[RMDB]
RNA sequence: GGGAACGACUCGAGUAGAGUCGAAAACCUACUGCCUUCGGGCAGUAGGAAACAGGUGCUUCAACAACCUGAAUAACUAGAUGAAACAUCUAGUGUAGAAGAAAAGGAACCGCUUCGGCGGUUCCAAGUCUAUAGUUGGGUUCGCCCAACUAUAGACAAAAGAAACAACAACAACAAC
Reactivity to 2A3 in 0.01 (KOAc 150mM, MgCl2 10mM, bicine 150mM(pH8.5), 24C), signal-to-noise 1, nucleotides 027 to 126: c000c010u010a020c000u000g000c000c000u040u030c180g050g010g040c000a010g000u010a000g000g030a020a000a000c020a010g000g000u020g000c090u170u120c040a080a060c040a060a080c060c020u000g040a020a040u100a060a000c000u000a010g010a010u050g150a300a240a100c050a060u000c010u000a010g000u010g020u070a120g050a300a020g000a020a150a000a020g010g000a000a000c000c040g000c070u050u030c230g090g000c000g000g000u000u000c010c010a000a010
Reactivity to DMS in 0.01 (KOAc 150mM, MgCl2 10mM, bicine 150mM(pH8.5), 24C), signal-to-noise 2, nucleotides 027 to 126: c000c000u000a000c000u000g010c000c000u010u000c240g030g020g060c000a020g020u000a000g000g000a030a030a080c030a000g010g000u000g000c110u000u000c070a070a100c080a240a070c000c000u000g000a170a100u010a120a020c000u000a000g020a000u000g010a150a130a090c050a020u000c000u000a000g000u000g000u010a090g000a140a120g010a090a130a140a080g000g000a010a000c000c000g030c020u000u000c260g020g030c000g050g010u000u000c000c000a000a000